[RMDB]
RNA sequence: GGGAACGACUCGAGUAGAGUCGAAAAGAUAUGGAGCUCGAGGAUCGUGGGAGAGCGAUCGGAAACGAUACGCUUCACGGGAGAGCUCCUAAGUCAAAACGGGGACUAAGUUCGCUUAGUCCCCGAACUUGACUAAACCGUUCGCGGUUUAGUCAAGAAAAGAAACAACAACAACAAC
Reactivity to DMS in 0.01 (KOAc 150mM, MgCl2 10mM, bicine 150mM(pH8.5), 24C), signal-to-noise 1, nucleotides 027 to 126: g020a040u000a300u000g010g000a010g020c020u010c000g000a080g010g010a020u010c000g020u000g000g010g000a190g000a050g000c000g010a050u020c010g020g010a110a100a210c010g000a010u000a080c000g020c000u010u000c000a010c020g000g010g010a090g010a000g010c020u000c000c000u030a010a070g000u000c060a090a030a090a250c030g000g010g000g000a020c000u000a000a000g000u000u020c220g040c030u000u000a000g000u000c000c000c010c000g010a000a010